[RMDB]
RNA sequence: GGGAACGACUCGAGUAGAGUCGAAAACUGAUAUGCUUCGGCAUAUCAGAAAAUAAGGUGCAAAAAGAUCAGGAAACUGAAAACUGCAGCACUAGCUGAAAAAAACAGACGUCUUCGGACGUCUGAAGUGUCAAUAAUUCUUCGGAAUUAUUGACACAAAAGAAACAACAACAACAAC
Reactivity to DMS in 0.01 (KOAc 150mM, MgCl2 10mM, bicine 150mM(pH8.5), 24C), signal-to-noise 2, nucleotides 027 to 126: c010u010g000a000u000a010u010g000c030u010u030c230g030g010c010a010u000a000u030c000a010g040a050a070a150a050u020a180a120g000g020u010g000c000a050a060a110a050a030g000a060u000c000a040g000g010a190a110a200c010u010g020a000a010a020a020c030u000g000c260a110g010c000a000c000u010a060g000c080u020g050a000a000a060a070a070a050a130c000a020g010a000c000g010u000c000u000u020c240g010g010a020c000g010u000c000u000g000a030a080
Reactivity to 2A3 in 0.01 (KOAc 150mM, MgCl2 10mM, bicine 150mM(pH8.5), 24C), signal-to-noise 1, nucleotides 027 to 126: c000u000g000a000u000a000u030g010c000u070u080c240g100g040c000a000u010a000u000c000a010g010a020a020a000a010u140a020a040g020g020u010g040c080a050a100a050a040a000g020a070u000c000a000g100g030a090a040a060c010u010g000a110a000a030a110c010u080g000c050a040g050c000a020c020u040a040g070c070u090g080a140a070a000a000a060a000a030c000a000g000a000c000g030u020c000u030u060c190g090g010a000c000g000u010c000u000g010a010a000